[RMDB]
RNA sequence: GGGAACGACUCGAGUAGAGUCGAAAAGGGCCAGGGAAGAUCCGGGAGCCGGAACUCGGCCGCUCCGUGCUCGGUGUAAACUCCUAUAAGAGUAGGCUCCAAGAAGCAGUACCCGCGGGCUCAGUUCGAAUCAGGGAAGGUUCGCCUUCCCUGAUUCAAAAGAAACAACAACAACAAC
Reactivity to DMS in 0.01 (KOAc 150mM, MgCl2 10mM, bicine 150mM(pH8.5), 24C), signal-to-noise 1, nucleotides 027 to 126: g000g020g030c010c000a300g010g000g000a140a180g010a130u000c000c160g000g060g030a090g000c040c000g050g000a100a060c090u020c130g000g030c130c050g000c200u010c050c020g010u000g020c030u010c060g050g030u010g010u000a100a030a090c060u000c000c030u000a150u050a080a160g020a020g010u000a160g010g000c020u000c000c060a090a110g000a060a090g000c020a080g010u000a280c050c010c020g070c300g000g020g000c020u000c010a160g030u000u000c070